An RNA of 177 nucleotides, treated with 2A3 and DMS and read out base by base. For DMS the reverse transcriptase was MarathonRT. Reactivities are given for positions 27 through 126.
RNA sequence: GGGAACGACUCGAGUAGAGUCGAAAAAAAAAUAGCGUAAUCGACAUUGAGUAUGUACGCUAAGUGUGUGUUGGAUACCUAACGUCCAAUUGAACACACACACAGUUGGACCUAAUGUCGAAAAAAACUUCAGAUUUAAGUUCGCUUAAAUCUGAAGAAAAGAAACAACAACAACAAC
Reactivity to 2A3 in 0.01 (KOAc 150mM, MgCl2 10mM, bicine 150mM(pH8.5), 24C), signal-to-noise 5, nucleotides 027 to 126: a000a000a000a000a010u130a020g030c040g050u050a060a080u010c000g000a000c010a000u010u030g030a030g070u140a080u260g090u050a030c030g000c030u020a130a170g000u000g000u000g000u000g020u020u090g000g010a020u060a130c020c070u100a180a040c100g000u000c010c000a000a020u060u120g150a100a000c020a000c010a000c000a000c000a000c000a020g070u230u200g090g030a010c000c000u020a020a010u020g010u020c000g000a100a020a010a000a000a000a020
Reactivity to DMS in 0.01 (KOAc 150mM, MgCl2 10mM, bicine 150mM(pH8.5), 24C), signal-to-noise 3, nucleotides 027 to 126: a030a040a060a100a080u010a040g010c040g000u000a060a090u000c010g030a010c010a040u000u000g010a080g020u000a030u010g010u000a100c040g020c020u000a060a100g020u000g020u000g000u000g010u000u000g010g000a070u010a100c110c100u010a080a150c200g000u000c000c000a040a080u000u010g010a100a060c050a030c020a000c010a010c020a040c140a040g000u000u000g010g010a040c020c020u000a010a010u000g000u000c020g020a010a000a040a050a080a070a110